[RMDB]
RNA sequence: GGGAACGACUCGAGUAGAGUCGAAAAGAUAUGGACGAGAACUACAAUUAAGCUUUGCCUUUGAUCAACAUGUACUCGGAAACGAGUACAUGUUGGGAGGCAAAGAAAGCAUUGCUCGUCCUAAGUCGCUCUAUAUAGCCUUCGGGCUAUAUAGAGCAAAAGAAACAACAACAACAAC
Reactivity to DMS in 0.01 (KOAc 150mM, MgCl2 10mM, bicine 150mM(pH8.5), 24C), signal-to-noise 1, nucleotides 027 to 126: g000a130u000a300u010g000g000a010c000g000a000g000a160a010c140u010a230c070a060a110u000u030a130a220g010c030u000u000u000g000c000c000u010u010u020g000a050u000c000a020a010c000a000u000g010u000a010c000u020c000g010g000a050a060a230c000g000a030g030u000a000c010a000u000g000u000u000g000g000g000a000g010g000c000a020a030a010g000a030a030a120g020c200a050u000u000g000c010u000c000g000u000c010c020u010a000a090g020u040c140
Reactivity to 2A3 in 0.01 (KOAc 150mM, MgCl2 10mM, bicine 150mM(pH8.5), 24C), signal-to-noise 2, nucleotides 027 to 126: g080a000u150a050u180g020g000a030c010g000a010g030a140a190c170u250a050c300a060a160u100u180a150a060g060c030u020u010u000g010c000c050u270u170u300g300a300u300c010a040a000c000a010u000g000u020a020c000u010c000g040g000a000a010a010c010g000a000g000u030a000c000a000u010g020u010u000g000g050g010a010g030g000c000a010a000a020g010a060a010a000g090c060a030u030u120g000c010u010c000g000u010c000c000u000a040a000g070u000c060